Conditions: 150 mM KOAc, 10 mM MgCl2 and 150 mM bicine (pH 8.5), 24 C. Chemical mapping of a 207-nucleotide RNA with 2A3. Values cover nucleotides 27 to 156.
[RMDB]
RNA sequence: GGGAACGACUCGAGUAGAGUCGAAAAUGAUUAAAGCUAUGGAAACAAAAGAUAGAAUUACGGGUAACCAACUAAAAGGUAUGUCAUUCAUAGGACUAAGAGAACUAAUGAUUAAACAACAAGCACAAGAUACUGCUAUGACAGAAGUUAUGCUUGAGGAAUGUCGGUUAUUCGUAACCGACAUUCCAAAAGAAACAACAACAACAAC
Reactivity to 2A3 in 0.01 (KOAc 150mM, MgCl2 10mM, bicine 150mM(pH8.5), 24C), signal-to-noise 2, nucleotides 027 to 156: u060g000a010u040u110a120a040a000g050c010u090a080u120g010g060a000a060a100c050a040a090a090a030g070a030u050a050g030a090a030u090u070a020c010g000g060g010u030a010a100c040c040a000a020c000u180a020a000a050a050g100g020u070a090u080g010u000c050a030u130u000c000a020u050a010g000g080a040c020u060a060a010g020a030g010a130a030c010u050a200a050u030g100a020u060u110a130a060a000c030a000a000c010a050a000g050c010a030c030a150a010g010a070u050a100c010u050g000c030u120a090u230g030a030c020a030g050a050a000g050u000u050a030u180g010c000u010u010g030a020